[RMDB]
RNA sequence: GGGAACGACUCGAGUAGAGUCGAAAAAGGGAUGGUCCAUCCAUGUGAAUACGCCAUCCCGUCUCUGUCGUCCGGCGUUGAGUGGAUGGGAGUGAGUUCGGAUGGGAGUGAGUACGACUGACUGGCAAGGUUAUUGCUCUACGAGACCGCCAUGUGAACACCGGAACAUAUUCGUAUGUUCCGGUGUAAAAGAAACAACAACAACAAC
Reactivity to DMS in 0.01 (KOAc 150mM, MgCl2 10mM, bicine 150mM(pH8.5), 24C), signal-to-noise 1, nucleotides 027 to 156: a080g080g000g010a020u000g020g040u000c050c050a050u010c010c070a150u010g020u010g010a170a110u020a080c060g020c000c010a040u020c010c010c010g000u000c030u010c010u020g010u000c090g000u000c040c020g050g090c040g040u000u000g000a210g060u000g000g040a130u010g030g000g010a070g060u000g020a110g030u000u000c100g040g010a060u010g030g000g000a190g010u000g010a170g060u000a100c040g000a160c040u000g000a050c000u000g000g000c110a100a140g010g040u010u030a130u000u000g000c020u030c000u000a180c030g010a170g000a110c040c000g000c020c000a140u000g000u000g000a050
Reactivity to 2A3 in 0.01 (KOAc 150mM, MgCl2 10mM, bicine 150mM(pH8.5), 24C), signal-to-noise 1, nucleotides 027 to 156: a000g020g000g000a000u000g000g000u050c090c050a000u010c000c000a030u200g190u060g210a140a020u300a170c030g020c000c000a000u020c010c020c000g000u000c020u040c000u010g070u010c010g020u050c010c030g010g040c030g030u060u150g020a050g010u060g050g000a010u010g010g000g010a020g100u110g000a030g000u210u300c040g000g000a000u070g030g000g000a030g020u090g000a030g030u030a010c050g040a060c070u020g010a010c000u030g010g000c060a120a010g070g000u110u110a070u080u090g030c000u000c010u080a000c080g030a010g000a050c000c000g000c000c050a090u190g000u010g000a000